Structure probing data (2A3 and DMS) for a 170-nucleotide construct. The reactions ran in a buffer of 150 mM KOAc, 10 mM MgCl2 and 150 mM bicine (pH 8.5), at 24 C.

RNA sequence: GGGAACGACUCGAGUAGAGUCGAAAAAACGAUCCGAGGGGACUAUCCCUCUCGAGAAUCGGCAAAUGGGCCCCUCGCUCGUAUCUCCGAGAGGAGACGAGAAGGAGGCGGAUCUCCCUUUGCCAUCACGCGUAGGAGUUCGCUCCUACGAAAAGAAACAACAACAACAAC
Reactivity to 2A3 in 0.01 (KOAc 150mM, MgCl2 10mM, bicine 150mM(pH8.5), 24C), signal-to-noise 9, nucleotides 027 to 129: a000a000c060g010a010u000c000c000g000a000g020g010g000g010a020c060u120a120u270c020c030c000u010c000u000c000g200a230g020a070a100u080c070g000g000c000a010a020a080u180g000g000g010c000c000c000c000u000c000g020c000u000c000g060u090a170u040c000u000c000c000g050a060g010a050g060g000a000g000a010c000g000a000g020a020a080g210g010a000g000g040c170g030g000a060u050c120u130c030c000c000u010u010u010g000c000c010a050u090c050a020c080g070
Reactivity to DMS in 0.01 (KOAc 150mM, MgCl2 10mM, bicine 150mM(pH8.5), 24C), signal-to-noise 9, nucleotides 027 to 129: a050a030c130g010a070u000c010c010g000a000g030g000g030g020a180c210u040a110u090c120c000c010u000c000u010c000g040a110g030a070a040u010c030g010g000c010a010a010a050u030g000g000g000c020c010c010c000u000c020g010c010u000c000g030u000a090u040c000u030c020c000g010a190g000a190g000g030a000g010a020c000g000a030g000a030a050g060g010a020g010g010c180g000g000a140u000c130u070c040c010c030u000u000u010g010c020c050a090u050c060a040c150g000